This 177-nucleotide RNA was probed chemically with 2A3 and DMS. It was measured as part of the RMDB library RFMREP.

RNA sequence: GGGAACGACUCGAGUAGAGUCGAAAAACACUACAACGCUAAGGCGAGGAAAUGUUCAUAGUGUAAGGAGAGCGGGAACUGGAAAACGCCUCGCUUUUUUCCUGUAAAACACCGCAACGCAGGAAAACGUGUUCAUAAUGUUCGCAUUAUGAACACGAAAAGAAACAACAACAACAAC
Reactivity to 2A3 in 0.01 (KOAc 150mM, MgCl2 10mM, bicine 150mM(pH8.5), 24C), signal-to-noise 1, nucleotides 027 to 126: a000c060a030c050u180a000c050a270a000c030g050c110u150a040a100g040g000c010g020a000g040g000a070a140a110u210g000u030u060c050a050u080a190g090u080g050u100a040a100g140g030a060g000a010g020c010g000g040g000a050a000c010u060g030g050a010a150a000a000c010g000c000c000u000c020g030c030u050u000u000u000u010u020c000c010u020g000u010a020a100a020a040c080a010c030c010g060c030a050a020c110g000c000a010g020g020a000a000a030a030
Reactivity to DMS in 0.01 (KOAc 150mM, MgCl2 10mM, bicine 150mM(pH8.5), 24C), signal-to-noise 2, nucleotides 027 to 126: a040c040a100c030u000a040c150a050a040c040g020c080u010a100a080g000g000c010g000a040g030g000a010a060a060u020g030u010u000c040a280u010a050g030u000g000u010a100a080g000g000a040g000a110g050c000g010g000g020a020a060c060u000g020g000a040a030a040a130c090g010c070c000u000c010g010c000u000u000u000u000u000u000c010c000u000g000u000a030a070a120a040c070a140c050c020g010c050a060a100c260g000c020a010g000g000a030a020a010a140

The DMS profile rests on 1,257 reads. The RNA was probed in 150 mM KOAc, 10 mM MgCl2 and 150 mM bicine (pH 8.5) at 24 C. For DMS the reverse transcriptase was MarathonRT.